[RMDB]
RNA sequence: GGGAACGACUCGAGUAGAGUCGAAAAAGAUAUGGACUUAUUUGAGCACUGCUACAAAGAGCACGAUGAAAGCAAUCGGAAACGAUUGCUGGAGUGCUCCAGUGCAAUGAUGAUAAGUCCUAAGUCAUCAUAUUCUUAUGUUCGCAUAAGAAUAUGAAAAAGAAACAACAACAACAAC
Reactivity to 2A3 in 0.01 (KOAc 150mM, MgCl2 10mM, bicine 150mM(pH8.5), 24C), signal-to-noise 9, nucleotides 027 to 126: a000g080a040u110a060u130g010g000a000c000u010u010a010u020u040u040g030a000g010c020a000c020u030g070c080u300a200c200a160a280a040g000a010g010c010a000c060g300a300u060g030a030a000a000g010c000a010a000u010c010g020g040a070a070a020c010g010a010u000u020g000c000u010g000g010a010g000u010g000c000u000c010c000a000g000u000g000c010a030a190u130g030a010u050g000a000u000a020a000g000u000c000c000u000a040a010g030u020c010a060
Reactivity to DMS in 0.01 (KOAc 150mM, MgCl2 10mM, bicine 150mM(pH8.5), 24C), signal-to-noise 9, nucleotides 027 to 126: a090g010a050u010a300u010g000g010a010c000u000u000a010u000u000u000g010a130g000c010a010c010u000g000c300u010a140c220a080a100a150g000a010g020c000a010c000g000a140u020g000a150a120a020g000c000a010a000u000c000g010g000a130a090a190c000g010a010u000u000g010c000u000g000g010a040g020u000g000c010u000c000c010a080g010u000g010c000a100a060u010g010a130u000g000a010u000a000a010g000u000c000c000u000a020a090g010u000c040a200
This 177-nucleotide RNA was probed chemically with 2A3 and DMS. It was measured as part of the RMDB library TTRDES. For DMS, 23,923 sequencing reads were counted. DMS adducts were read by reverse transcription with MarathonRT. Reactivities are given for positions 27 through 126. The RNA was probed in 150 mM KOAc, 10 mM MgCl2 and 150 mM bicine (pH 8.5) at 24 C.